[RMDB]
RNA sequence: GGGAACGACUCGAGUAGAGUCGAAAAGUGUCAUCCGAGUAGCUAACACUGGGAUCCAGGAAACUUGAUUACAAAUAAAUAUGCUGUUUUAAUGAAUUUGUGUAAUAGAAGCUAGAUUCCAGUGUCAUGUAUCGUCUCGGUUCGCCGAGACGAUACAAAAAGAAACAACAACAACAAC
Reactivity to DMS in 0.01 (KOAc 150mM, MgCl2 10mM, bicine 150mM(pH8.5), 24C), signal-to-noise 1, nucleotides 027 to 126: g000u000g010u030c000a000u000c070c000g000a080g000u000a050g030c130u050a070a000c000a000c000u000g000g000g000a000u000c000c070a300g000g000a100a050a150c000u000u000g020a260u000u000a000c000a000a100a000u000a020a210a120u030a040u050g050c180u000g050u000u000u070u080a070a110u020g000a040a000u000u000u000g000u000g000u000a110a030u000a000g000a030a090g000c000u000a140g000a000u000u000c000c000a020g000u010g000u000c050a080
Reactivity to 2A3 in 0.01 (KOAc 150mM, MgCl2 10mM, bicine 150mM(pH8.5), 24C), signal-to-noise 1, nucleotides 027 to 126: g140u020g050u060c000a050u000c000c000g020a000g040u140a000g030c030u060a060a000c000a000c000u000g000g050g000a000u000c000c080a050g030g060a030a270a030c000u000u070g000a000u000u130a000c000a000a130a100u140a060a000a050u270a140u270g000c020u040g240u280u210u250u300a100a200u050g130a000a000u000u000u000g130u000g000u080a000a000u000a160g190a000a000g000c000u060a000g000a000u000u000c000c000a020g000u000g000u020c050a000